Source information:
Conditions: 150 mM KOAc, 10 mM MgCl2 and 150 mM bicine (pH 8.5), 24 C. The record gives the reactivity of an RNA of 177 nucleotides to DMS and 2A3. Reactivities are rounded to 0.1 and cut off at 0 and 3. It was measured as part of the RMDB libraries RFM100 and RFMREP.
RNA sequence: GGGAACGACUCGAGUAGAGUCGAAAAAUUCUUAUUGCCGCCCGAUUUUCGCCCAGCGCGCGCCAAGCCCGCUUGCGAUAACGCUAUCACUGCGUUGGCCCGGUCCCUUCGGCUUCGGAUUCCUCAGAUGUUAACUCGAGUUCGCUCGAGUUAACAUAAAAGAAACAACAACAACAAC
Reactivity to DMS in 0.01 (KOAc 150mM, MgCl2 10mM, bicine 150mM(pH8.5), 24C), signal-to-noise 2, nucleotides 027 to 126: a100u000u030c020u000u020a120u010u010g000c020c050g020c030c040c060g000a130u020u010u010u000c030g030c070c050c080a080g010c050g000c150g010c010g060c050c060a110a140g010c040c020c010g010c020u000u020g070c030g010a090u020a040a020c070g000c040u000a060u060c150a050c110u010g000c000g040u020u000g000g000c040c010c010g020g010u010c010c040c020u010u010c030g020g000c020u000u010c110g030g000a210u000u000c000c000u020c090a150g010
Reactivity to 2A3 in 0.01 (KOAc 150mM, MgCl2 10mM, bicine 150mM(pH8.5), 24C), signal-to-noise 2, nucleotides 027 to 126: a000u090u020c010u060u100a140u060u160g020c030c020g020c000c000c030g050a080u070u020u010u110c040g030c010c030c030a040g000c010g000c000g000c000g020c050c040a050a040g010c000c030c000g020c050u050u070g020c020g030a040u040a100a020c050g010c010u060a040u230c070a050c190u130g010c000g030u030u020g040g000c020c000c000g010g030u030c000c000c000u000u050c010g000g000c000u030u040c010g070g010a050u030u030c000c000u040c030a050g010